An RNA of 177 nucleotides, treated with 2A3 and DMS and read out base by base. The DMS profile rests on 21,110 reads. The RNA was probed in 150 mM KOAc, 10 mM MgCl2 and 150 mM bicine (pH 8.5) at 24 C. DMS adducts were read by reverse transcription with MarathonRT. The data come from the RNA Mapping Database (RMDB), library OK2TST.
RNA sequence: GGGAACGACUCGAGUAGAGUCGAAAAAAAUCUUGGCGGCUUGAGCAAACAGGCCGCAGCCGAACUGGGCUUGAGGCCGGGUACGGCAAUUGCCGCCGGUCUGAUCGAUGCACAUGCGGGCGGUAUACAUUACGAAAAUAUUCGUAUUUUCGUAAUGAAAAGAAACAACAACAACAAC
Reactivity to 2A3 in 0.01 (KOAc 150mM, MgCl2 10mM, bicine 150mM(pH8.5), 24C), signal-to-noise 5, nucleotides 027 to 126: a000a010a000u050c030u040u080g130g000c010g010g000c000u020u010g020a050g130c090a140a040a040c000a010g000g000c000c000g010c000a000g010c000c000g020a040a030c020u090g030g030g020c000u030u080g120a060g090g000c030c010g070g010g020u090a060c010g010g000c050a040a210u140u170g010c000c010g010c000c000g000g020u000c010u010g030a080u060c050g060a060u140g010c050a020c010a040u100g070c080g060g010g000c020g010g010u050a070u040a080
Reactivity to DMS in 0.01 (KOAc 150mM, MgCl2 10mM, bicine 150mM(pH8.5), 24C), signal-to-noise 9, nucleotides 027 to 126: a070a070a060u010c030u000u010g010g020c010g010g010c010u000u000g000a200g010c240a110a110a220c020a030g010g010c000c000g020c010a030g010c000c010g010a110a100c070u000g010g010g020c010u000u010g010a090g020g010c000c000g010g000g010u000a150c030g010g010c010a150a050u010u010g010c000c000g010c010c000g000g020u000c040u000g000a090u000c070g000a100u010g010c100a060c050a030u000g010c080g000g000g010c010g000g010u000a070u010a220